[RMDB]
RNA sequence: GGGAACGACUCGAGUAGAGUCGAAAAAGAGCCGCGGCUUAGUCGCGCGUACGUAUCGCAGUCACCACAGCGGUGGGCCCGAUCGUCGUCAUCGCCGAAAACGCGACGGAACCGGUCCGUCACGUGGGCAGUCUAGUGCAUUCGUGCACUAGACUGCAAAAGAAACAACAACAACAAC
Reactivity to DMS in 0.01 (KOAc 150mM, MgCl2 10mM, bicine 150mM(pH8.5), 24C), signal-to-noise 2, nucleotides 027 to 126: a080g000a160g020c130c050g010c090g000g030c040u000u010a100g000u000c100g010c080g000c130g010u000a060c090g030u000a040u000c090g000c090a060g000u010c070a110c000c010a110c100a100g050c120g000g020u000g000g000g030c010c140c030g030a040u010c050g010u000c050g000u000c090a070u000c130g010c040c040g040a040a050a100a070c020g000c040g010a010c000g000g000a070a250c180c210g000g020u000c010c010g010u000c010a010c010g000u000g000g000
Reactivity to 2A3 in 0.01 (KOAc 150mM, MgCl2 10mM, bicine 150mM(pH8.5), 24C), signal-to-noise 1, nucleotides 027 to 126: a000g090a030g020c080c100g000c020g010g000c050u190u190a060g010u100c020g000c020g010c020g080u010a020c050g060u070a080u070c030g020c090a030g050u040c020a000c080c000a020c010a030g080c020g080g010u050g020g040g000c000c010c040g040a060u040c020g050u010c010g040u020c050a070u130c110g020c110c050g080a090a080a010a010c070g000c000g000a010c000g020g000a030a080c000c040g020g080u000c000c000g000u010c000a020c030g010u000g000g080
The data come from the RNA Mapping Database (RMDB), library OK2TST. The record gives the reactivity of an RNA of 177 nucleotides to DMS and 2A3. For 2A3 the reverse transcriptase was SuperScript II with manganese. For DMS the reverse transcriptase was MarathonRT. Values cover nucleotides 27 to 126. Conditions: 150 mM KOAc, 10 mM MgCl2 and 150 mM bicine (pH 8.5), 24 C. For DMS, 1,180 sequencing reads were counted.